Structure probing data (2A3 and DMS) for a 177-nucleotide construct. For 2A3, 2,719 sequencing reads were counted. The data come from the RNA Mapping Database (RMDB), library M2PK50. For DMS, 1,215 sequencing reads were counted. DMS adducts were read by reverse transcription with MarathonRT.
RNA sequence: GGGAACGACUCGAGUAGAGUCGAAAACACACGUGCUUCGGCACGUGUGAAACCUAGUCAAAAUAACGCAUGACUAGGAAAGCGUAAGUACGAAAGUACAAAAAAGGUGAGUGUUCGCACUCACCAAGCGAUAAAAUCUGUUCGCAGAUUUUAUCGCAAAAGAAACAACAACAACAAC
Reactivity to 2A3 in 0.01 (KOAc 150mM, MgCl2 10mM, bicine 150mM(pH8.5), 24C), signal-to-noise 1, nucleotides 027 to 126: c000a010c000a000c020g040u000g010c000u060u060c100g100g000c020a000c000g010u020g000u000g000a000a000a000c010c000u000a010g020u000c000a020a040a110a250u210a210a030c090g010c130a090u030g010a000c000u000a000g010g000a110a020a000g020c020g100u140a090a080g000u010a010c020g010a120a020a010g000u000a010c010a000a150a000a030a010a000g000g000u000g000a000g000u030g040u050u080c160g050c070a010c010u000c020a000c000c000a000a010
Reactivity to DMS in 0.01 (KOAc 150mM, MgCl2 10mM, bicine 150mM(pH8.5), 24C), signal-to-noise 2, nucleotides 027 to 126: c010a020c010a000c000g020u000g000c020u000u020c300g020g000c010a010c000g050u000g000u010g000a000a100a100c010c000u000a000g000u000c010a050a070a080a110u000a070a150c260g000c300a150u000g010a030c000u000a000g000g000a030a030a080g000c110g000u030a120a080g000u000a000c020g000a040a080a220g020u000a000c010a000a000a020a070a110a070g000g030u010g000a010g000u000g000u010u020c240g010c010a030c000u000c000a010c010c020a030a040